[RMDB]
RNA sequence: GGGAACGACUCGAGUAGAGUCGAAAACAUGUUAUCGCUGGGCCUAGCUCAAGUAUGUGGGAGGCUUACUGAAGCGCGCACGGUAAGCCGAAGAACACAUAUACUUGGCUAGGCCUGUGCUGAAGCGCGCACGGCAACCGAAAGGUGCGAACUUAAAGAUAGAGAACAUCUUCGGAUGUUCUCUAUCAAAAGAAACAACAACAACAAC
Reactivity to DMS in 0.01 (KOAc 150mM, MgCl2 10mM, bicine 150mM(pH8.5), 24C), signal-to-noise 1, nucleotides 027 to 156: c000a150u000g010u010u000a070u020c040g000c000u000g000g010g000c010c000u000a040g000c030u040c040a050a020g020u020a000u000g040u010g020g000g040a100g060g020c010u000u000a010c010u010g030a080a070g000c000g060c010g000c000a300c010g020g000u000a010a030g020c000c040g010a060a110g020a120a300c030a020c000a010u000a090u000a030c110u000u000g050g030c000u000a010g000g000c000c000u000g000u000g030c000u000g000a040a040g000c000g050c010g040c030a300c000g000g020c010a090a050c050c010g020a050a120a210g030g020u000g020c050g010a050a170c050u010u010a060a160a180
This 207-nucleotide RNA was probed chemically with DMS. It was measured as part of the RMDB library RNAMAK.